Structure probing data (DMS and 2A3) for a 207-nucleotide construct. For 2A3, 9,712 sequencing reads were counted. It was measured as part of the RMDB library M2RFOK.

RNA sequence: GGGAACGACUCGAGUAGAGUCGAAAAAACGUUGCAUGAUCGUAAAACAUGCCCGGCUUGCCGUGAGCCGCCUUUGAAAGAAAGGUUUACACGGACUCUGUUGCGUUACGCACGUACCUAACUUGUGAAAACGGCAUCUUGUUCGCAAGAUGCCGAAGUAUAUCCGUAUCUUCGGAUACGGAUAUACAAAAGAAACAACAACAACAAC
Reactivity to DMS in 0.01 (KOAc 150mM, MgCl2 10mM, bicine 150mM(pH8.5), 24C), signal-to-noise 1, nucleotides 027 to 156: a110a050c030g010u000u010g010c000a010u000g010a070u000c040g020u000a060a080a000a070c010a050u000g020c010c000c000g010g010c010u010u000g030c000c050g030u010g000a050g000c020c000g010c000c000u010u000u000g020a190a090a260g000a060a020a030g000g010u020u010u010a190c050a030c000g000g010a030c180u010c060u010g020u020u000g000c030g000u000u000a130c090g080c070a050c120g010u000a050c070c020u010a070a090c060u000u010g040u000g010a070a060a060a200c000g010g010c000a020u000c000u000u000g020u000u010c300g000c050a000a030g000a010u020g020c000c010g000a010a020
Reactivity to 2A3 in 0.01 (KOAc 150mM, MgCl2 10mM, bicine 150mM(pH8.5), 24C), signal-to-noise 5, nucleotides 027 to 156: a000a010c000g000u000u000g000c000a000u000g020a060u190c040g080u220a090a090a000a000c000a000u000g000c000c000c000g010g000c000u020u080g020c010c000g010u000g000a000g000c000c000g020c000c000u030u010u020g080a100a050a000g030a010a010a000g010g020u010u040u040a010c000a000c000g000g020a020c010u080c050u100g100u100u040g020c020g040u040u050a060c160g020c030a020c020g020u040a040c000c030u050a100a170c050u130u110g060u040g140a050a090a040a030c000g000g000c000a000u000c000u000u010g020u040u060c160g020c110a000a000g000a000u000g000c000c000g000a000a000